[RMDB]
RNA sequence: GGGAACGACUCGAGUAGAGUCGAAAAUUUACGGUAUUCGUACCGUAAACGAGCAAGCAAGCAGCGCAACCAGACAAGACGAUAAUAAGAUCGAGCAUGCUGAUAGUAGGAUCUUCGGAUCCUACAAAAGGUGACUAUACUUCGGUAUAGUCACCUUAAAAGAAACAACAACAACAAC
Reactivity to DMS in 0.01 (KOAc 150mM, MgCl2 10mM, bicine 150mM(pH8.5), 24C), signal-to-noise 3, nucleotides 027 to 126: u010u000u010a000c000g010g020u000a000u010u010c180g010u000a010c020c000g020u000a000a010a030c130g000a110g020c090a070a060g030c070a060a040g020c030a040g020c050g010c070a050a150c040c030a070g010a090c080a040a070g020a070c020g000a090u030a060a060u030a120a070g000a040u020c050g000a130g020c040a070u000g010c020u000g020a090u000a060g000u000a010g020g000a000u000c000u000u010c150g040g000a020u000c000c010u010a000c000a020a030
Reactivity to 2A3 in 0.01 (KOAc 150mM, MgCl2 10mM, bicine 150mM(pH8.5), 24C), signal-to-noise 1, nucleotides 027 to 126: u020u000u020a020c000g020g000u010a030u010u130c190g020u040a040c000c000g000u010a000a000a000c000g030a040g000c020a050a030g000c010a060a000g000c020a020g070c010g000c050a050a070c010c000a000g010a070c020a080a020g050a040c010g010a000u070a240a060u100a070a150g050a160u030c040g000a050g030c040a030u080g000c020u080g020a090u090a090g020u010a000g000g020a000u000c000u010u000c050g040g010a000u000c000c020u020a010c000a000a010
This 177-nucleotide RNA was probed chemically with DMS and 2A3.
Conditions: 150 mM KOAc, 10 mM MgCl2 and 150 mM bicine (pH 8.5), 24 C.
The data come from the RNA Mapping Database (RMDB), library M2PK50.
For DMS the reverse transcriptase was MarathonRT.